[RMDB]
RNA sequence: GGGAACGACUCGAGUAGAGUCGAAAACUCGCUGUUUUUGUGGCUGGCUUUCAGCGGGCUGGAGGAGCCGGGACCGGAGGCGGAGGACCGAGCCAAAAACGUCAGCCGAGGCCGGGCGGCCCCGCUCAAAAUCUUCGUAUCUUCGGAUACGAAGAAACAAACUUAAUCUGUUCGCAGAUUAAGUUUGAAAAGAAACAACAACAACAAC
Reactivity to 2A3 in 0.01 (KOAc 150mM, MgCl2 10mM, bicine 150mM(pH8.5), 24C), signal-to-noise 1, nucleotides 027 to 156: c010u020c020g000c030u050g080u030u040u010u080u070g070u080g040g010c050u020g030g010c010u050u120u190c040a010g010c050g000g000g000c050u080g020g050a160g030g010a040g020c070c020g000g000g040a080c010c000g010g030a020g060g000c030g010g020a060g010g010a020c020c040g030a040g040c040c000a090a070a040a000a010c020g010u040c000a020g010c010c000g000a040g000g010c000c000g010g000g060c020g010g030c000c000c010c010g000c010u050c030a120a140a040a100u010c000u000u010c000g000u020a000u010c010u050u010c140g120g000a010u010a000c000g000a000a000g000a000a000a000
An RNA of 207 nucleotides, treated with 2A3 and read out base by base. The 2A3 profile rests on 1,014 reads. Source: RMDB library M2RFPK, as collected in RNAgym. Values are in units of 0.01, from 0 to 300, in steps of 10. For 2A3 the reverse transcriptase was SuperScript II with manganese.